Chemical mapping of a 207-nucleotide RNA with 2A3. For 2A3, 1,846 sequencing reads were counted.
[RMDB]
RNA sequence: GGGAACGACUCGAGUAGAGUCGAAAAACAGUCAGUACGCUGACUGAGGGAAACGGGAGCCGGGCUUGGGACAAGAGCCAUCCCAAGUCCAAGGCCAAGUAGGAUCUAGUGAUGGUACGCCAUCACAAAAACUGGUCUACCUUCGGGUAGACCAGAACCUCCUUUAAGACUUCGGUCUUAAAGGAGGAAAAGAAACAACAACAACAAC
Reactivity to 2A3 in 0.01 (KOAc 150mM, MgCl2 10mM, bicine 150mM(pH8.5), 24C), signal-to-noise 2, nucleotides 027 to 156: a000c000a000g000u010c000a000g000u050a040c210g030c090u000g020a000c010u010g020a080g030g050g030a050a220a120c090g050g030g030a070g040c030c040g020g000g000c000u000u000g000g000g000a000c030a070a130g030a020g140c000c020a050u020c030c000c000a000a000g010u020c000c000a010a020g000g010c020c000a030a010g000u090a040g050g120a050u060c080u120a070g000u000g000a000u000g000g010u040a030c240g070c010c000a000u020c010a000c010a000a070a000a000a000c000u010g000g000u000c000u000a000c000c000u020u060c180g050g000g000u000a000g020a000c000c000a000g000a000a000